An RNA of 177 nucleotides, treated with 2A3 and DMS and read out base by base. Values cover nucleotides 27 to 126. The RNA was probed in 150 mM KOAc, 10 mM MgCl2 and 150 mM bicine (pH 8.5) at 24 C.

[RMDB]
RNA sequence: GGGAACGACUCGAGUAGAGUCGAAAAGUGGAUAGUUUCGACUAUCCACACAACUGAUGAUCUUACAGUGGAGGAUGAAGAAGAUGGCGAUCGGAUCCUCAAAUAGCACAGAGUUCGCUCUGUGCAAACAUAAGACAGAUUUCGAUCUGUCUUAUGUAAAAGAAACAACAACAACAAC
Reactivity to 2A3 in 0.01 (KOAc 150mM, MgCl2 10mM, bicine 150mM(pH8.5), 24C), signal-to-noise 9, nucleotides 027 to 126: g000u000g000g000a000u010a010g000u020u050u110c170g030a010c010u000a000u000c000c000a000c000a000c000a010a010c020u080g030a080u060g020a050u110c030u060u170a060c030a070g040u110g140g030a020g020g010a040u080g080a060a130g020a040a020g060a090u130g110g110c100g060a030u030c010g020g030a020u010c000c000u010c020a040a070a090u150a020g000c000a000c000a000g010a000g010u060u060c150g050c070u000c000u000g000u000g000c000a000a010
Reactivity to DMS in 0.01 (KOAc 150mM, MgCl2 10mM, bicine 150mM(pH8.5), 24C), signal-to-noise 9, nucleotides 027 to 126: g020u000g000g000a010u000a000g000u000u000u020c180g020a040c000u000a010u000c000c000a010c000a050c160a090a070c040u000g000a090u010g010a110u000c050u010u000a130c070a060g010u000g010g010a050g010g010a040u000g010a140a140g000a060a080g010a070u000g010g020c100g010a100u000c030g010g000a080u000c010c010u000c060a060a060a070u010a100g010c000a000c000a000g000a020g010u000u010c230g010c010u000c000u000g010u000g010c000a010a040